An RNA of 207 nucleotides, treated with 2A3 and read out base by base.
RNA sequence: GGGAACGACUCGAGUAGAGUCGAAAAUGAUAUAAACAUAUCAAAAGAAGGAAUUAAACGAUGGAGAAGAUUUGACGGACCAUGUGGUUAUGAUUUAUACACGGCAGAUAACGUAAUUCCAAAAGAUGGUGUACGAGGAGCAUUCGUUGAUAAAGACGAAGUGAGACGUGUUCGCACGUCUCACUUCAAAAGAAACAACAACAACAAC
Reactivity to 2A3 in 0.01 (KOAc 150mM, MgCl2 10mM, bicine 150mM(pH8.5), 24C), signal-to-noise 1, nucleotides 027 to 156: u070g010a000u090a000u060a080a300a000c010a000u060a000u090c010a000a160a000a000g000a050a020g000g040a040a030u130u120a050a160a000c130g030a080u080g000g000a060g040a100a000g050a090u070u000u080g090a090c130g000g010a020c040c020a080u050g020u000g030g150u100u030a080u020g030a020u220u000u000a080u030a000c060a000c080g030g020c000a010g030a120u090a170a000c020g020u000a000a090u030u030c020c000a070a000a000a000g140a100u120g000g020u060g000u050a030c080g000a030g000g000a000g010c010a010u010u110c020g000u000u010g040a050u020a230a230a000g050a060c110

For 2A3, 406 sequencing reads were counted.
The reactions ran in a buffer of 150 mM KOAc, 10 mM MgCl2 and 150 mM bicine (pH 8.5), at 24 C.
It was measured as part of the RMDB library OK3TST.